[RMDB]
Overview: An RNA of 177 nucleotides, treated with 2A3 and DMS and read out base by base. Source: RMDB library OK1LIB, as collected in RNAgym. For DMS, 2,544 sequencing reads were counted.
RNA sequence: GGGAACGACUCGAGUAGAGUCGAAAAGGUGGCUAGGAGGGUCCCAAAACCCGAAAAGGGAACUAGGCACCGAUUUAGCAUGUUCGUCCUUUGCCCGGGGCCCGAUUUAUUUUGGACGUUCAUGCGAGGGAUCGUGUUCGUUCGCGAAUACGAUCCCAAAAGAAACAACAACAACAAC
Reactivity to 2A3 in 0.01 (KOAc 150mM, MgCl2 10mM, bicine 150mM(pH8.5), 24C), signal-to-noise 4, nucleotides 027 to 126: g000g000u000g000g150c000u000a000g010g040a050g000g040g000u020c000c000c010a110a140a040a090c030c010c020g070a130a100a040a080g010g010g000a000a000c000u000a000g060g010c000a000c010c000g000a000u130u150u170a040g020c000a000u000g000u010u020c010g000u030c000c020u110u120u220g110c010c030c060g010g000g000g000c000c000c000g020a030u060u180u100a230u070u230u170u130g020g000a000c010g000u000u000c010a000u000g000c000g010a050
Reactivity to DMS in 0.01 (KOAc 150mM, MgCl2 10mM, bicine 150mM(pH8.5), 24C), signal-to-noise 1, nucleotides 027 to 126: g020g060u010g010g030c000u010a020g000g020a120g010g000g000u030c000c000c000a110a040a060a100c040c030c020g000a020a070a090a160g000g000g000a240a090c020u000a000g020g010c000a010c090c010g000a070u030u000u040a080g020c000a000u010g020u000u000c020g000u000c020c000u000u030u010g000c040c010c040g000g030g040g000c020c000c020g030a050u000u100u040a140u000u010u020u010g010g000a000c000g000u020u000c040a000u000g000c040g030a140

The reactions ran in a buffer of 150 mM KOAc, 10 mM MgCl2 and 150 mM bicine (pH 8.5), at 24 C.